[RMDB]
RNA sequence: GGGAACGACUCGAGUAGAGUCGAAAAAGCAACUUCCUGUGGCUGCUGUAACAGGUCACCACAAGCUGGGGGUAUUGGAACAACACAGAUCUCUUCUCUUCCCAUUCUGGAGGCCGGAAGUCUGAAAUCAGUUUCACUGGGCCAGAACCAAGGUAUACAUAAUGCUACCGUUCGCGGUAGCAUUAUGAAAAGAAACAACAACAACAAC
Reactivity to 2A3 in 0.01 (KOAc 150mM, MgCl2 10mM, bicine 150mM(pH8.5), 24C), signal-to-noise 1, nucleotides 027 to 156: a000g050c030a030a050c010u070u040c000c030u060g010u000g010g000c020u010g020c030u020g040u090a060a090c000a020g110g000u060c010a010c020c010a010c050a070a020g010c060u060g000g000g000g000g000u030a060u050u070g040g020a080a020c040a030a020c020a010c000a080g090a100u040c020u010c000u130u030c060u030c000u050u070c000c000c000a030u080u050c010u090g050g000a070g040g040c040c000g050g000a020a020g060u020c030u030g070a060a060a130u210c020a010g000u020u020u090c020a020c030u040g000g040g000c020c010a000g010a000a010c020c010a030a040g040g010u110a050u020a090
Reactivity to DMS in 0.01 (KOAc 150mM, MgCl2 10mM, bicine 150mM(pH8.5), 24C), signal-to-noise 1, nucleotides 027 to 156: a060g030c040a030a100c090u000u000c010c020u020g030u010g010g020c010u010g000c010u020g030u000a140a150c140a200g010g000u000c140a060c010c000a040c050a060a100g000c060u010g020g000g000g010g040u010a090u000u000g040g020a060a060c020a030a090c050a120c070a060g000a040u000c050u000c030u020u000c030u010c050u000u010c020c020c030a260u000u000c030u000g010g000a080g030g000c000c060g010g000a080a060g020u010c010u000g000a060a090a090u000c070a100g000u000u000u010c020a070c020u000g020g030g030c010c040a070g010a030a040c020c020a030a120g000g010u000a090u000a150